[RMDB]
RNA sequence: GGGAACGACUCGAGUAGAGUCGAAAAAAGGCAGGGCGAAACCAGUCGUUGCCUCGGUUGAUAAGGCUGGCUCCCUGGCAUGGGAGCGCCGCAUGGGCCAAGUGUGGUAGCCGAAGGGCUAGGCCCGCAUUAAGCACACGUUCGCGUGUGCUUAAUGAAAAGAAACAACAACAACAAC
Reactivity to 2A3 in 0.01 (KOAc 150mM, MgCl2 10mM, bicine 150mM(pH8.5), 24C), signal-to-noise 1, nucleotides 027 to 126: a000a010g070g000c090a030g030g020g040c010g110a050a010a060c020c020a040g030u020c030g150u070u000g080c000c030u010c050g160g040u090u060g080a130u020a180a030g010g000c040u010g140g000c000u030c010c000c010u060g170g090c080a050u090g020g030g000a000g040c020g000c000c000g030c020a100u090g010g050g000c030c060a060a050g060u050g040u060g070g040u040a010g000c000c010g020a030a020g110g000g000c000u040a040g000g000c000c000c060g000
Reactivity to DMS in 0.01 (KOAc 150mM, MgCl2 10mM, bicine 150mM(pH8.5), 24C), signal-to-noise 3, nucleotides 027 to 126: a080a040g000g010c040a080g020g020g010c010g020a120a140a060c140c120a060g010u000c020g020u000u000g020c020c000u000c100g000g000u000u000g000a130u010a100a120g010g020c020u010g010g030c000u000c000c010c000u000g020g010c200a070u000g010g010g000a020g000c000g000c010c010g000c120a040u000g000g010g000c050c040a090a150g000u010g010u000g010g000u000a020g010c000c000g000a130a120g000g010g010c010u000a240g010g010c000c010c010g000
Structure probing data (2A3 and DMS) for a 177-nucleotide construct. The 2A3 profile rests on 1,482 reads. 2A3 adducts were read by reverse transcription with SuperScript II with manganese. Source: RMDB library VIROID, as collected in RNAgym. The DMS profile rests on 3,176 reads. Values cover nucleotides 27 to 126.